RNA sequence: GGGAACGACUCGAGUAGAGUCGAAAAUAGUCUCAACAGAUGACGACACUUCUGUUCAAUCUCAUAUCCUAUCCAUACUGGAUGUAAAACACGCAUGUGGCGCUGACUGGUGCGUUAACCAGUUUUUGAUCUCUUCUGUGUUCGCACAGAAGAGAUCAAAAGAAACAACAACAACAAC
Reactivity to 2A3 in 0.01 (KOAc 150mM, MgCl2 10mM, bicine 150mM(pH8.5), 24C), signal-to-noise 2, nucleotides 027 to 126: u220a020g100u000c000u000c020a000a030c020a020g060a060u020g120a110c140g090a030c050a060c110u030u040c010u000g040u040u050c120a150a090u040c050u000c150a070u090a000u130c000c020u050a060u090c010c040a010u030a050c000u060g000g040a030u040g050u140a020a030a000a000c030a000c090g060c050a110u070g000u040g030g000c000g000c000u000g010a060c000u000g000g020u000g000c000g000u010u030a000a000c000c000a010g000u000u000u000u020u020
The data come from the RNA Mapping Database (RMDB), library RFM100.
Structure probing data (2A3) for a 177-nucleotide construct.
Conditions: 150 mM KOAc, 10 mM MgCl2 and 150 mM bicine (pH 8.5), 24 C.
The 2A3 profile rests on 959 reads.
2A3 adducts were read by reverse transcription with SuperScript II with manganese.